[RMDB]
RNA sequence: GGGAACGACUCGAGUAGAGUCGAAAACAAACAUGGGCGAAAACCUCUCGUCAAGAAAGACGUGAGGAACAAUUCCGCGUUCAAGUAUGCCAAACGCGGGUGGCAUACAAAUCGCCCAAAAACAAAAGAUGACGUAUCACUUCGGUGAUACGUCAUCAAAAGAAACAACAACAACAAC
Reactivity to 2A3 in 0.01 (KOAc 150mM, MgCl2 10mM, bicine 150mM(pH8.5), 24C), signal-to-noise 1, nucleotides 027 to 126: c000a010a190a000c030a210u100g000g000g000c010g100a050a030a030a030c000c000u000c000u000c000g010u010c080a170a000g200a300a090a000g000a160c010g000u000g000a000g000g030a000a000c000a010a010u100u040c020c090g000c050g050u110u050c130a110a000g050u020a120u060g000c000c000a100a000a000c100g000c030g000g000g050u020g000g000c030a000u020a000c110a000a070a040u000c000g000c000c000c000a000a000a000a060a000c020a000a000a040a000